[RMDB]
RNA sequence: GGGAACGACUCGAGUAGAGUCGAAAAGUUACACGCUUCGGCGUGUAACAAAUACUCAAACGGUCGCGGAAACGAGAGGACACUCUAGGAGGCAUCCAUGCAAAACCCAUUGCUUCGGCAAUGGGAACUUACAUUUGGGGUUCGCCCCAAAUGUAAGAAAAGAAACAACAACAACAAC
Reactivity to 2A3 in 0.01 (KOAc 150mM, MgCl2 10mM, bicine 150mM(pH8.5), 24C), signal-to-noise 1, nucleotides 027 to 126: g000u020u010a020c000a000c020g000c040u030u060c160g100g020c000g000u000g000u000a000a000c010a000a000a000u030a000c010u020c040a090a080a060c050g090g010u050c000g020c020g090g040a030a070a070c050g010a050g000a040g100g060a040c030a020c080u030c060u060a060g000g090a000g030g020c020a000u060c030c020a010u110g020c020a010a060a120a150c000c000c000a000u010u010g000c000u000u060c180g040g000c000a000a000u010g020g010g000a000a000
Reactivity to DMS in 0.01 (KOAc 150mM, MgCl2 10mM, bicine 150mM(pH8.5), 24C), signal-to-noise 2, nucleotides 027 to 126: g000u000u000a000c000a000c000g060c000u000u010c290g050g000c000g050u000g000u000a000a000c000a040a100a170u000a080c030u000c030a050a070a180c110g000g030u010c030g010c050g020g000a040a080a050c100g010a070g040a020g000g000a060c140a070c070u000c030u010a120g010g010a080g000g000c050a080u000c050c020a040u000g020c110a050a040a090a120c000c000c000a000u000u000g000c000u000u000c250g000g030c000a000a000u000g010g000g010a010a000

The record gives the reactivity of an RNA of 177 nucleotides to 2A3 and DMS. The reactions ran in a buffer of 150 mM KOAc, 10 mM MgCl2 and 150 mM bicine (pH 8.5), at 24 C.